[RMDB]
RNA sequence: GGGAACGACUCGAGUAGAGUCGAAAAAGUGAGCUUAAAACUCGCAUUCUUGUGUCAUAAGCAGCGUCAGAACUACUUGGUGAAUCAUCAACAUAAUAAGCUAUCUGAUCUGAUUGAGCCCAAGCAGCAUUACUAGGUCGUUCGCGACCUAGUAAUGAAAAGAAACAACAACAACAAC
Reactivity to DMS in 0.01 (KOAc 150mM, MgCl2 10mM, bicine 150mM(pH8.5), 24C), signal-to-noise 6, nucleotides 027 to 126: a060g000u000g000a020g020c030u000u050a060a040a110a300c020u010c020g020c040a150u020u010c030u010u000g020u010g000u000c020a060u030a100a140g030c040a020g000c180g020u010c020a030g000a060a080c070u000a030c100u000u000g010g010u000g000a080a060u050c070a070u010c060a040a050c120a050u010a080a070u020a050a070g000c130u020a070u010c020u010g010a040u000c030u000g000a040u020u010g010a080g000c020c020c000a050a050g030c210a080g000
Reactivity to 2A3 in 0.01 (KOAc 150mM, MgCl2 10mM, bicine 150mM(pH8.5), 24C), signal-to-noise 9, nucleotides 027 to 126: a000g050u040g000a010g030c060u150u160a070a100a030a040c010u010c010g010c010a040u090u040c010u080u120g060u020g030u050c040a100u050a190a040g040c030a010g000c030g070u020c030a020g020a110a100c020u090a030c040u080u050g040g000u060g120a160a090u110c030a030u030c020a020a100c030a060u180a180a040u110a190a020g060c050u050a050u080c020u050g030a040u010c010u020g030a100u070u090g040a050g030c000c010c010a030a020g030c010a010g040